Conditions: 150 mM KOAc, 10 mM MgCl2 and 150 mM bicine (pH 8.5), 24 C. Chemical mapping of a 177-nucleotide RNA with DMS and 2A3. It was measured as part of the RMDB library OK1LIB. 2A3 adducts were read by reverse transcription with SuperScript II with manganese.

RNA sequence: GGGAACGACUCGAGUAGAGUCGAAAAAUGAAAAGUGUAAUAAUACCCGAGAAGUGCAGUUCCAACUGUUGAUGGGUAAUAUUUAUGUUUGAUUGUCAGGUGGUGAUUUACUAACAUGAAGUAUGCAUGUACCGGAGUUAUUCGUAACUCCGGUACAAAAAGAAACAACAACAACAAC
Reactivity to DMS in 0.01 (KOAc 150mM, MgCl2 10mM, bicine 150mM(pH8.5), 24C), signal-to-noise 3, nucleotides 027 to 126: a050u040g000a070a050a060a060g000u000g010u010a010a050u010a040a090u010a050c000c000c010g030a180g030a130a120g020u030g020c050a070g000u010u040c160c210a130a080c040u000g020u020u010g020a180u030g020g000g000u010a010a030u000a010u000u010u010a030u020g000u000u010u000g000a130u010u010g010u010c030a100g020g000u000g040g010u010g000a060u010u020u000a030c060u020a040a040c100a070u020g000a070a030g000u000a050u010g000c130a120
Reactivity to 2A3 in 0.01 (KOAc 150mM, MgCl2 10mM, bicine 150mM(pH8.5), 24C), signal-to-noise 2, nucleotides 027 to 126: a000u200g050a020a050a020a010g120u090g080u070a080a050u070a010a050u050a010c030c030c110g040a100g110a190a020g060u090g050c000a000g000u110u180c150c030a110a050c030u010g060u030u040g120a100u240g000g000g000u000a010a010u000a000u030u030u050a090u060g060u000u000u080g180a300u110u000g030u020c100a100g020g290u080g050g120u050g190a070u060u040u090a040c020u050a140a000c000a150u080g020a000a000g030u030a100u050g040c110a010